[RMDB]
RNA sequence: GGGAACGACUCGAGUAGAGUCGAAAAUUUCAGCGGUCAUUUUGGUCCCACCCUGCACUGUUUUCAUGGUAACUCUGUGCUUUUCUAGGUUUGCUGUGGAAUUUGUCAUCUAAUGACAAACUCAAGAAGAACUGAUUUAAUUCGUUAAAUCAGUUCUAAAAGAAACAACAACAACAAC
Reactivity to 2A3 in 0.01 (KOAc 150mM, MgCl2 10mM, bicine 150mM(pH8.5), 24C), signal-to-noise 4, nucleotides 027 to 126: u050u060u050c020a020g030c050g040g030u040c050a070u040u090u110u220g080g020u030c000c000c000a030c020c010c000u030g020c020a020c040u050g040u110u070u060u090c070a070u090g070g000u050a030a020c010u000c040u070g060u050g090c000u090u120u080u000c040u070a050g040g020u050u060u070g000c010u020g040u060g060g020a040a050u020u040u020g020u000c000a050u000c080u180a230a100u050g000a000c000a010a020a030c070u090c040a030a050g080a040
Reactivity to DMS in 0.01 (KOAc 150mM, MgCl2 10mM, bicine 150mM(pH8.5), 24C), signal-to-noise 8, nucleotides 027 to 126: u010u010u000c040a090g020c050g020g020u010c060a080u000u000u000u000g020g010u000c010c010c010a160c080c040c030u000g010c090a070c090u000g010u000u000u000u000c040a060u010g010g010u000a040a070c060u000c030u000g010u000g010c120u010u000u000u000c050u000a080g010g000u000u010u010g020c020u000g010u000g010g000a030a060u000u000u000g000u000c000a030u000c200u010a080a080u000g000a020c010a000a020a030c100u000c030a080a100g010a180
This 177-nucleotide RNA was probed chemically with 2A3 and DMS. Values cover nucleotides 27 to 126. The RNA was probed in 150 mM KOAc, 10 mM MgCl2 and 150 mM bicine (pH 8.5) at 24 C. Source: RMDB library OK2TRN, as collected in RNAgym. The 2A3 profile rests on 5,825 reads.